[RMDB]
RNA sequence: GGGAACGACUCGAGUAGAGUCGAAAAAGCCGGAUAACGAGUUGAUGUAUGGAGCCGGCUAGUUGCCUUUGCAUGUUGCGGCGCGGGAUGCGUUAUCCUGUUAACGGCGAGUGAAGAACAACCGAAAGGGUUAUUAUAUCUUCGGAUAUAAUAACCCAAAAGAAACAACAACAACAAC
Reactivity to 2A3 in 0.01 (KOAc 150mM, MgCl2 10mM, bicine 150mM(pH8.5), 24C), signal-to-noise 2, nucleotides 027 to 126: a000g010c010c000g000g000a050u040a000a050c040g020a010g010u040u010g070a060u110g030u080a090u090g060g000a000g000c000c000g000g000c000u000a010g030u000u040g010c020c000u020u000u110g000c020a010u050g000u010u080g150c030g060g000c010g000c030g020g010g050a070u060g000c000g040u090u030a030u030c000c010u000g000u050u040a050a010c020g020g000c010g000a030g030u070g000a000a080g060a110a040c000a050a000c040c000g000a100a000a010
Reactivity to DMS in 0.01 (KOAc 150mM, MgCl2 10mM, bicine 150mM(pH8.5), 24C), signal-to-noise 5, nucleotides 027 to 126: a060g000c010c010g000g000a070u040a060a060c070g000a110g010u000u010g010a100u010g010u010a080u020g010g000a160g000c000c000g000g000c000u000a020g010u010u010g000c070c070u000u020u030g030c050a050u010g010u000u010g010c040g010g010c080g000c050g000g000g010a040u010g010c170g000u030u030a020u010c020c000u000g000u010u010a100a200c060g000g020c010g000a080g020u030g000a080a070g000a100a110c080a110a090c060c030g000a050a080a120

Overview: Structure probing data (2A3 and DMS) for a 177-nucleotide construct. As a SHAPE reagent, 2A3 marks flexible, mostly unpaired nucleotides at the ribose 2'-OH. Values are in units of 0.01, from 0 to 300, in steps of 10. The reactions ran in a buffer of 150 mM KOAc, 10 mM MgCl2 and 150 mM bicine (pH 8.5), at 24 C. The data come from the RNA Mapping Database (RMDB), library OK1LIB.